Structure probing data (DMS) for a 177-nucleotide construct.
[RMDB]
RNA sequence: GGGAACGACUCGAGUAGAGUCGAAAAGAUAUGGAUUCAUUAGAGCCGACGAUCAUGCGUAACAUCACUAUGAGGUCGGAAACGACCUCAUAGUGUGGCAUGGGAGGCUAUUCUGAAUCCUAAGUCACAUAAAUUGCAUGUUCGCAUGCAAUUUAUGAAAAGAAACAACAACAACAAC
Reactivity to DMS in 0.01 (KOAc 150mM, MgCl2 10mM, bicine 150mM(pH8.5), 24C), signal-to-noise 4, nucleotides 027 to 126: g000a020u000a030u010g000g000a010u000u000c010a010u000u000a020g000a040g020c020c000g010a060c300g010a010u020c000a000u000g010c010g030u010a160a300c290a100u020c000a000c000u000a000u000g000a010g000g000u000c000g010g010a000a010a030c010g010a000c010c000u000c000a000u000a000g020u000g010u000g000g000c010a000u000g000g010g000a000g030g010c000u000a000u000u000c010u000g010a010a010u000c000c000u000a000a050g000u000c000a300